Structure probing data (2A3) for a 177-nucleotide construct.

RNA sequence: GGGAACGACUCGAGUAGAGUCGAAAAUCUUUCAGGAUUAAGGAAUCUUUCAAAGAUAAGACCAUAUUUUAUUGGAUCAAUCUUAGUUAUUCCUAAAGUAUAUGCAACUAAAGAUCCUGCUCCAGAGCGACGCUAUGUCCUUCGGGACAUAGCGUCGAAAAGAAACAACAACAACAAC
Reactivity to 2A3 in 0.01 (KOAc 150mM, MgCl2 10mM, bicine 150mM(pH8.5), 24C), signal-to-noise 1, nucleotides 027 to 126: u020c000u000u010u030c020a020g020g020a020u000u000a000a000g040g000a010a010u020c090u020u040u000c090a070a030a010g010a000u030a000a200g000a000c010c010a030u040a130u080u300u060u060a270u140u030g000g000a050u060c000a000a000u000c120u000u000a030g000u000u060a000u030u020c000c000u010a080a120a000g000u000a060u000a110u300g120c090a090a000c000u080a060a020a020g020a010u000c010c000u030g000c090u080c050c010a040g000a020g180
Source information:
As a SHAPE reagent, 2A3 marks flexible, mostly unpaired nucleotides at the ribose 2'-OH. Reactivities are given for positions 27 through 126.